[RMDB]
RNA sequence: GGGAACGACUCGAGUAGAGUCGAAAACGAGGCUAAUUCUAAAAGAAGCAGCCGUAGCGAAAGCGAUUACUCGCACAGCAAUGGAGGAGUAACGUAAUAAAUGCGUUUAGUCAUCUGUGGCAGACCCGUGCUGAAAUUAGUUCGCUAAUUUCAGCACAAAAGAAACAACAACAACAAC
Reactivity to DMS in 0.01 (KOAc 150mM, MgCl2 10mM, bicine 150mM(pH8.5), 24C), signal-to-noise 2, nucleotides 027 to 126: c080g040a140g000g010c020u000a040a290u000u000c000u030a020a090a110a220g000a010a000g000c300a010g030c020c040g000u070a140g030c020g000a090a030a110g000c020g000a110u010u040a110c100u000c000g020c100a190c100a060g000c140a080a080u020g000g000a090g000g000a010g020u000a010a010c000g010u010a050a140u010a050a070a170u000g000c050g000u010u010u010a020g040u000c000a050u010c020u000g040u010g030g020c000a110g000a190c040c030c030
Reactivity to 2A3 in 0.01 (KOAc 150mM, MgCl2 10mM, bicine 150mM(pH8.5), 24C), signal-to-noise 1, nucleotides 027 to 126: c010g000a030g010g000c010u020a050a050u000u000c020u100a050a080a070a260g010a010a000g010c050a000g010c040c000g000u030a020g090c030g070a080a060a010g030c000g000a000u000u040a070c060u010c000g110c010a060c020a050g000c020a020a050u060g050g020a090g080g020a020g100u020a010a000c000g020u030a000a140u040a060a240a120u200g020c010g040u000u060u100a030g050u020c000a120u020c050u080g060u040g060g030c000a000g010a120c000c010c060